[RMDB]
RNA sequence: GGGAACGACUCGAGUAGAGUCGAAAAAGAAAUAGCGUACUGUACACUCAGAAUGUACGCUAAGUAAGAGUGUGUUCUAUAACGUCCAAUUGAACACACACACAGUUGGACCGAGUGUAAAAAAAAACUAUCUUAGUAAGUUCGCUUACUAAGAUAGAAAAGAAACAACAACAACAAC
Reactivity to DMS in 0.01 (KOAc 150mM, MgCl2 10mM, bicine 150mM(pH8.5), 24C), signal-to-noise 7, nucleotides 027 to 126: a070g010a090a140a110u000a020g010c000g000u000a010c010u010g000u010a050c010a010c020u000c020a120g010a130a080u000g010u000a000c010g000c000u000a010a080g010u010a090a100g000a080g000u000g010u000g000u000u010c010u000a070u010a080a090c150g010u010c020c020a060a090u000u010g010a020a020c010a010c010a010c020a110c170a070c120a080g020u010u010g000g000a060c040c120g000a030g020u000g000u000a000a000a000a000a050a060a100a080a160
Reactivity to 2A3 in 0.01 (KOAc 150mM, MgCl2 10mM, bicine 150mM(pH8.5), 24C), signal-to-noise 6, nucleotides 027 to 126: a020g120a020a060a030u040a010g000c000g000u010a000c020u080g050u140a020c030a000c030u030c020a050g060a210a080u120g030u010a000c000g000c000u000a030a020g090u080a060a010g070a020g020u010g000u010g010u010u000c050u050a200u060a250a060c060g060u000c020c000a030a020u040u030g030a030a010c000a000c000a000c010a000c000a000c010a080g150u160u090g040g020a020c050c050g010a040g010u020g020u070a050a020a010a000a000a000a010a010a020

Structure probing data (DMS and 2A3) for a 177-nucleotide construct. For 2A3 the reverse transcriptase was SuperScript II with manganese. The data come from the RNA Mapping Database (RMDB), library M2PK90.